The record gives the reactivity of an RNA of 177 nucleotides to 2A3 and DMS. The RNA was probed in 150 mM KOAc, 10 mM MgCl2 and 150 mM bicine (pH 8.5) at 24 C.

[RMDB]
RNA sequence: GGGAACGACUCGAGUAGAGUCGAAAAGGCACGCGCGGUCAGCUCCAUCAUCUCCUCGCUUAGGUACUCGUCCUCCAGGAGCGCCAGCCAGUCCUCGAUCUGCAGCUGCUGGGUGCGGGGCCCCAGGAUACAAUAACCCAUUCGUGGGUUAUUGUAUAAAAGAAACAACAACAACAAC
Reactivity to 2A3 in 0.01 (KOAc 150mM, MgCl2 10mM, bicine 150mM(pH8.5), 24C), signal-to-noise 9, nucleotides 027 to 126: g060g010c030a020c060g040c010g010c030g030g060u070c030a020g020c020u020c020c010a080u070c010a050u020c030u020c010c000u020c010g050c040u080u090a050g030g030u080a140c020u010c040g060u040c010c020u060c020c010a030g020g030a030g020c020g020c020c010a010g030c020c010a020g050u070c010c030u040c040g080a140u030c010u070g010c020a040g020c020u090g020c010u040g020g020g020u070g030c020g010g000g020g020c000c000c000c000a030g030g030
Reactivity to DMS in 0.01 (KOAc 150mM, MgCl2 10mM, bicine 150mM(pH8.5), 24C), signal-to-noise 8, nucleotides 027 to 126: g020g010c030a050c080g000c060g020c030g000g000u010c060a110g000c030u000c040c020a090u010c080a080u020c060u010c010c020u000c080g000c070u010u010a070g000g010u020a040c050u010c050g000u000c040c010u010c050c050a090g010g000a070g000c060g020c110c050a100g010c050c040a090g000u010c030c030u000c060g010a060u010c040u000g000c070a110g010c030u010g010c010u010g010g000g010u010g010c030g000g000g000g010c050c000c010c030a080g000g010
Record summary:
The data come from the RNA Mapping Database (RMDB), library OK1LIB.